[RMDB]
RNA sequence: GGGAACGACUCGAGUAGAGUCGAAAAGGGGUCGUUGGUAGCAAUUGUACAGCAUCGAUCUGUACUGAAGCCUCCACGGUACAGGGAGCUGACGGGUUGCUAUAAUCAACGACGGAGGCACCCAAAACGGAAACAGGCGUUCGCGCCUGUUUCCGAACAAUUGAACAGCGUUCGCGCUGUUCAAUUGAAAAGAAACAACAACAACAAC
Reactivity to 2A3 in 0.01 (KOAc 150mM, MgCl2 10mM, bicine 150mM(pH8.5), 24C), signal-to-noise 2, nucleotides 027 to 156: g030g040g110g000u010c010g000u000u050g020g200u300a010g000c020a020a020u110u140g050u170a300c030a050g010c030a050u300c050g000a000u000c000u010g010u010a010c010u020g030a150a050g000c000c000u020c000c000a010c050g010g010u000a000c000a000g010g000g000a000g010c000u000g000a010c070g110g000g000u030u000g010c000u030a060u150a200a050u090c000a000a000c000g000a000c000g010g000a000g000g000c010a010c000c000c000a020a080a030a060c020g010g000a010a000a000c000a000g000g000c000g040u060u090c300g040c050g040c100c000u000g000u000u000u000c000c000g010a000a000